[RMDB]
RNA sequence: GGGAACGACUCGAGUAGAGUCGAAAAACUGGCUACGGCCAGAGUCUAAUCUAAAACAAGGUAAAUAUCAGGUUGUUUCCUGUAUUCGAUCGAAACAUCUGUAUAUACCUUUGUUCCGAUUGGACAACACCACAACUUGUUUCGACAAGUUGUGGUGAAAAGAAACAACAACAACAAC
Reactivity to 2A3 in 0.01 (KOAc 150mM, MgCl2 10mM, bicine 150mM(pH8.5), 24C), signal-to-noise 6, nucleotides 027 to 126: a000c010u010g000g000c020u030a050c250g140g000c000c000a020g000a010g010u000c000u010a010a010u000c010u020a080a140a000a010c000a010a000g040g010u050a070a120a040u100a070u140c040a020g020g090u110u070g030u010u120u020c040c040u110g150u140a200u110u240c180g120a150u100c040g010a020a020a000c000a000u000c000u000g070u010a010u000a000u020a100c000c000u040u050u090g000u000u000c010c020g000a000u000u000g000g000a000c000a000a030
Reactivity to DMS in 0.01 (KOAc 150mM, MgCl2 10mM, bicine 150mM(pH8.5), 24C), signal-to-noise 2, nucleotides 027 to 126: a110c000u000g010g000c000u010a120c180g040g010c030c000a020g010a070g000u000c000u000a000a010u000c000u000a100a080a030a010c000a010a000g000g010u000a010a060a010u010a030u040c000a020g000g000u000u040g000u000u000u000c000c120u010g020u070a180u080u040c270g010a060u000c300g010a000a000a020c000a020u000c000u000g000u000a000u000a110u000a000c000c000u000u010u020g010u010u010c120c300g010a010u000u000g000g010a010c010a140a280